RNA sequence: GGGAACGACUCGAGUAGAGUCGAAAAAAUAUUGUCUUCCCUUUCUUCUGUCGCAUUUUCUGCCCCUGCACCUGCUCCAGCGGACAGUCACCAUGAAGAUCAUCACAAAGAUGAAAAACCAGCGGUAGCCUGGUGAUUAGUUCGCUAAUCACCAGGCAAAAGAAACAACAACAACAAC
Reactivity to DMS in 0.01 (KOAc 150mM, MgCl2 10mM, bicine 150mM(pH8.5), 24C), signal-to-noise 1, nucleotides 027 to 126: a040a040u030a110u010u000g030u000c050u000u000c000c000c000u020u010u000c030u020u000c070u000g020u000c070g080c110a090u040u000u040u010c020u010g010c020c000c000c030u000g000c080a080c010c030u000g000c030u040c090c080a070g010c000g000g000a030c090a090g040u000c030a070c000c010a060u000g030a070a110g030a160u000c020a000u000c020a090c170a090a070a190g000a010u000g030a020a070a030a090a180c070c010a000g030c090g010g000u000a130
This 177-nucleotide RNA was probed chemically with DMS. The DMS profile rests on 704 reads.